[RMDB]
RNA sequence: GGGAACGACUCGAGUAGAGUCGAAAAUCAGGAUGAUGGUGUUUUGGUCAGAUCAACUGGAUUCUUGAUCACAUCAGGAGUCAUUUGCUCUCAUGGAUCAUGCAUUUCACGACAUCAGGAUCCAAAAAUAGAUGCGAUGGUUCGCCAUCGCAUCUAUAAAAGAAACAACAACAACAAC
Reactivity to 2A3 in 0.01 (KOAc 150mM, MgCl2 10mM, bicine 150mM(pH8.5), 24C), signal-to-noise 1, nucleotides 027 to 126: u050c010a000g080g000a050u070g020a040u070g020g060u020g010u060u300u100u000g030g020u030c010a010g000a100u250c000a020a010c030u140g160g000a010u050u000c000u050u030g040a050u070c040a030c010a110u030c020a020g050g050a010g000u030c040a080u070u060u090g050c010u000c000u010c040a080u240g110g000a010u050c000a010u070g000c070a000u060u080u100c070a060c080g150a030c020a010u070c010a040g060g070a010u050c010c050a000a080a000a080
Reactivity to DMS in 0.01 (KOAc 150mM, MgCl2 10mM, bicine 150mM(pH8.5), 24C), signal-to-noise 1, nucleotides 027 to 126: u010c000a050g010g020a000u000g000a270u000g000g030u000g040u000u000u010u010g020g010u000c050a050g010a030u000c010a050a100c120u000g000g010a030u000u000c020u010u000g050a000u020c140a130c080a300u000c060a050g010g000a020g000u000c070a120u000u010u010g020c050u010c080u010c100a080u010g000g010a030u000c000a000u000g000c050a030u000u030u010c080a040c080g000a130c070a000u000c030a060g000g000a040u000c020c010a000a050a050a050
The record gives the reactivity of an RNA of 177 nucleotides to 2A3 and DMS. The reactions ran in a buffer of 150 mM KOAc, 10 mM MgCl2 and 150 mM bicine (pH 8.5), at 24 C. For 2A3, 863 sequencing reads were counted. DMS adducts were read by reverse transcription with MarathonRT.